[RMDB]
RNA sequence: GGGAACGACUCGAGUAGAGUCGAAAACAUGACACCAGUGCGGAACCCAUUUCUGCACCGUGACACCACCAAUGGUAUCUUCUCUAUUGGCGUAUUCACAACUGAAGAUGUCAUCCAAUAAAACGACGCUAGCCGUGAGUUUCGACUCACGGCUAGCAAAAGAAACAACAACAACAAC
Reactivity to 2A3 in 0.01 (KOAc 150mM, MgCl2 10mM, bicine 150mM(pH8.5), 24C), signal-to-noise 2, nucleotides 027 to 126: c040a020u030g020a000c000a000c010c050a000g050u020g030c000g040g000a080a140c110c040c000a080u000u070u000c000u020g000c000a050c050c050g050u080g010a000c000a000c140c000a000c000c020a100a000u000g030g000u010a060u200c270u190u080c040u060c000u010a000u000u070g010g020c000g010u000a060u030u130c070a000c010a120a090c110u080g020a040a010g010a080u060g000u000c000a030u000c000c100a150a140u260a100a070a000a010c030g190a020c070